[RMDB]
RNA sequence: GGGAACGACUCGAGUAGAGUCGAAAAUUCAAGCGAUUCGUCGCUUGAACCUGAGGAGACUCAUGCAAAAUUGUUCCCUUUUGCUUUUGCUUUCCUCUUUUAAGUAGUAGUGCUUCGGCACUACUAACGAUCCCAAAUAAUUCGUUAUUUGGGAUCGAAAAGAAACAACAACAACAAC
Reactivity to DMS in 0.01 (KOAc 150mM, MgCl2 10mM, bicine 150mM(pH8.5), 24C), signal-to-noise 4, nucleotides 027 to 126: u000u000c000a000a010g010c000g010a030u000u010c190g020u000c000g020c010u000u000g010a010a050c020c010u010g010a010g000g010a030g000a020c010u000c080a030u000g000c000a010a010a010a020u000u020g010u000u000c000c000c010u000u000u000u000g000c010u000u000u000u000g000c180u000u000u000c000c000u000c010u020u000u010u000a070a170g020u000a010g010u000a010g010u010g000c000u000u010c220g030g010c000a000c000u000a000c000u000a010a070
Reactivity to 2A3 in 0.01 (KOAc 150mM, MgCl2 10mM, bicine 150mM(pH8.5), 24C), signal-to-noise 3, nucleotides 027 to 126: u040u000c000a000a000g010c000g020a010u040u100c190g020u000c000g140c000u000u000g000a010a000c000c010u010g010a000g000g010a010g000a010c010u010c050a030u100g020c000a020a030a110a130u230u300g000u020u010c000c000c040u010u010u000u000g010c000u000u050u040u050g000c000u010u020u000c000c000u060c070u090u130u060u090a130a080g020u030a010g000u000a010g000u010g000c000u030u050c150g060g010c000a010c000u000a000c000u000a000a000
This 177-nucleotide RNA was probed chemically with DMS and 2A3. The reactions ran in a buffer of 150 mM KOAc, 10 mM MgCl2 and 150 mM bicine (pH 8.5), at 24 C. Values cover nucleotides 27 to 126. For DMS, 9,532 sequencing reads were counted. The 2A3 profile rests on 7,920 reads.